An RNA of 177 nucleotides, treated with DMS and 2A3 and read out base by base.
The reactions ran in a buffer of 150 mM KOAc, 10 mM MgCl2 and 150 mM bicine (pH 8.5), at 24 C.
RNA sequence: GGGAACGACUCGAGUAGAGUCGAAAAUGAAAAAAGUGCUGGAAGAAGGCACUGCUAAAGAUGACCGCACCGGUACUGGGACGCUGUCAAUUUUUGGGCAUCAGAUGCGUUUCAAUUUACAAGAUGGCUGUGUAACAAGUUUCGACUUGUUACACAGAAAAGAAACAACAACAACAAC
Reactivity to DMS in 0.01 (KOAc 150mM, MgCl2 10mM, bicine 150mM(pH8.5), 24C), signal-to-noise 5, nucleotides 027 to 126: u010g010a010a040a070a080a080a050g010u000g000c000u000g000g010a160a070g010a170a150g000g000c000a010c010u000g020c070u010a030a030a030g010a050u000g000a040c010c060g020c050a070c030c020g010g010u010a070c150u000g000g000g000a070c130g020c020u000g000u000c020a030a060u000u000u000u000u000g010g010g020c010a040u000c140a050g010a170u010g010c040g020u000u000u000c040a040a070u000u000u010a090c180a070a120g010a080u010g000g010
Reactivity to 2A3 in 0.01 (KOAc 150mM, MgCl2 10mM, bicine 150mM(pH8.5), 24C), signal-to-noise 3, nucleotides 027 to 126: u080g020a000a000a000a000a000a010g010u020g010c000u030g020g030a090a110g060a070a020g100g010c000a000c020u010g030c010u050a110a060a040g060a050u040g040a040c010c030g010c010a020c040c000g120g040u170a130c100u170g010g000g030a030c080g000c020u010g000u040c020a170a190u040u020u040u100u060g050g020g030c000a000u010c020a040g060a140u050g020c000g000u020u030u010c030a020a060u080u090u080a150c070a110a070g060a130u140g120g000
For DMS the reverse transcriptase was MarathonRT.